[RMDB]
An RNA of 177 nucleotides, treated with DMS and 2A3 and read out base by base.
It was measured as part of the RMDB library TTRDEL.
High 2A3 reactivity points to a flexible backbone, as in loops and unpaired stretches.
The 2A3 profile rests on 7,049 reads.
For 2A3 the reverse transcriptase was SuperScript II with manganese.

RNA sequence: GGGAACGACUCGAGUAGAGUCGAAAAGAUAUGGACCCAUCCACCGUCCGACGAUCUCGGAAACGAGGGAGGACAGGUGGAGUGGGUCCUAAGUCAAAAGGUCACGUUCGUUCGCGAACGUGACCAAGAAUAGUUAGCACUUCGGUGCUAACUAUUCAAAAGAAACAACAACAACAAC
Reactivity to DMS in 0.01 (KOAc 150mM, MgCl2 10mM, bicine 150mM(pH8.5), 24C), signal-to-noise 3, nucleotides 027 to 126: g000a050u000a300u000g000g000a010c000c000c000a070u000c000c000a010c000c000g000u000c000c000g010a060c230g010a020u010c000u010c000g000g000a170a090a200c010g000a020g010g000g000a010g010g000a020c000a030g030g010u010g000g000a000g000u010g010g020g000u000c000c010u000a000a060g020u010c040a080a100a120a110g020g000u000c010a010c000g000u000u010c000g010u000u000c280g020c010g010a000a020c000g010u000g000a000c000c000a010a030
Reactivity to 2A3 in 0.01 (KOAc 150mM, MgCl2 10mM, bicine 150mM(pH8.5), 24C), signal-to-noise 3, nucleotides 027 to 126: g030a010u070a030u150g000g010a000c010c000c010a010u000c000c010a020c010c000g010u020c010c010g100a290c020g000a190u000c000u000c010g030g050a060a060a060c010g000a000g000g000g040a020g010g010a020c210a200g000g000u040g030g020a010g050u060g000g020g000u000c000c000u000a010a000g040u000c010a030a020a040a090g000g000u020c000a010c000g010u000u010c010g010u050u070c290g020c000g220a010a000c000g000u000g000a000c010c000a000a000